[RMDB]
Structure probing data (DMS) for a 177-nucleotide construct. Conditions: 150 mM KOAc, 10 mM MgCl2 and 150 mM bicine (pH 8.5), 24 C. Source: RMDB library OK2TST, as collected in RNAgym.
RNA sequence: GGGAACGACUCGAGUAGAGUCGAAAACUAGUCUGCAUGGGAACCUUAGGACUUCCCUACAAGCUGAUAAAACCCCUGUUGCCAAGAUUCAUGAGUGUCAAUUUCCUGCAUCGUCUUGCAGUGAGCAGGACGUUGGUAGGUUCGCCUACCAACGUCCAAAAGAAACAACAACAACAAC
Reactivity to DMS in 0.01 (KOAc 150mM, MgCl2 10mM, bicine 150mM(pH8.5), 24C), signal-to-noise 1, nucleotides 027 to 126: c070u000a080g020u000c010u000g030c030a100u000g010g000g020a000a020c120c050u000u010a150g000g010a130c280u010u000c000c000c000u000a090c070a060a080g030c000u000g020a180u000a030a000a080a180c100c040c030c030u000g010u000u000g000c060c020a100a110g000a170u020u010c030a040u010g000a060g010u000g020u000c080a040a050u010u010u000c060c030u000g020c020a030u000c140g020u000c070u010u000g000c010a110g040u010g010a140g020c020a030